[RMDB]
Chemical mapping of a 177-nucleotide RNA with 2A3 and DMS. For 2A3, 1,781 sequencing reads were counted.
RNA sequence: GGGAACGACUCGAGUAGAGUCGAAAAUUGGAACACACCAACAAAGCUGUUUUUCAGAAUCAGAAAUCUCAAUAUUAGGACAAUUACUUUGGAAUGAAGAUGUCCCCAGCUUACCUUGACAGCUGUGUGUUUAUGACGACUUCGGUCGUCAUAAACAAAAAGAAACAACAACAACAAC
Reactivity to 2A3 in 0.01 (KOAc 150mM, MgCl2 10mM, bicine 150mM(pH8.5), 24C), signal-to-noise 4, nucleotides 027 to 126: u030u030g000g000a140a010c010a000c000a000c020c080a040a140c010a070a130a030g040c020u000g020u010u010u020u050u080c060a050g110a090a050u070c040a030g070a040a080a020u080c050u020c010a110a070u060a150u190u270a040g030g000a000c010a020a050u160u090a110c210u010u070u040g090g110a240a130u160g030a040a070g050a050u030g010u010c000c000c000c000a010g040c030u090u150a150c030c060u140u130g070a070c020a000g020c000u030g050u020g000
Reactivity to DMS in 0.01 (KOAc 150mM, MgCl2 10mM, bicine 150mM(pH8.5), 24C), signal-to-noise 3, nucleotides 027 to 126: u030u040g040g000a070a150c170a070c080a030c040c150a020a060c220a200a100a110g000c120u000g000u000u000u010u000u030c100a090g000a110a180u040c110a170g000a040a100a040u030c000u000c020a020a060u000a090u050u040a160g030g000a060c040a030a010u020u020a090c140u000u000u000g000g020a060a050u030g000a040a020g000a080u000g010u000c010c070c020c030a060g010c000u030u030a130c130c050u030u050g000a010c050a000g010c010u000g000u000g030

It was measured as part of the RMDB library OK1LIB.
The RNA was probed in 150 mM KOAc, 10 mM MgCl2 and 150 mM bicine (pH 8.5) at 24 C.